This 177-nucleotide RNA was probed chemically with DMS and 2A3. For DMS, 1,894 sequencing reads were counted. 2A3 is a SHAPE reagent: it acylates the 2'-hydroxyl of flexible nucleotides of all four kinds. The reactions ran in a buffer of 150 mM KOAc, 10 mM MgCl2 and 150 mM bicine (pH 8.5), at 24 C. The 2A3 profile rests on 1,778 reads. Values cover nucleotides 27 to 126. It was measured as part of the RMDB library M2PK50. For DMS the reverse transcriptase was MarathonRT.
[RMDB]
RNA sequence: GGGAACGACUCGAGUAGAGUCGAAAAAGACAUACGUUCGCGUAUGUCUGACGGGCACCUGACCCUAAGGUAAUGCUCUAUGACAGGACACACUGAUUGUGAUACCUCGAGAUUUCGAUCUCGAGAAGAACGACAUCUCUUUCGAGAGAUGUCGUUCAAAAGAAACAACAACAACAAC
Reactivity to DMS in 0.01 (KOAc 150mM, MgCl2 10mM, bicine 150mM(pH8.5), 24C), signal-to-noise 2, nucleotides 027 to 126: a000g000a010c000a000u000a000c000g010u000u010c200g040c010g030u000a000u000g010u000c000u020g000a110c200g010g010g010c020a070c020c030u000g000a180c020c000c040u000a070a040g020g010u000a080a110u000g000c050u010c060u000a050u000g000a140c050a030g000g020a130c050a040c050a050c070u010g010a120u010u000g010u000g020a200u000a080c190c000u020c000g010a000g010a030u010u000u010c200g000a030u010c000u000c000g020a010g000a060a040
Reactivity to 2A3 in 0.01 (KOAc 150mM, MgCl2 10mM, bicine 150mM(pH8.5), 24C), signal-to-noise 2, nucleotides 027 to 126: a000g010a010c010a000u010a000c000g030u000u090c260g000c010g130u000a000u000g000u000c000u010g000a040c030g010g010g000c020a010c010c000u050g170a190c030c010c040u040a060a010g020g010u030a060a070u100g000c010u000c030u050a110u200g120a020c070a060g020g050a050c020a000c000a000c060u130g180a300u180u100g030u010g070a070u160a110c010c010u000c010g030a010g010a030u070u140u120c210g030a000u000c010u010c000g020a000g000a000a010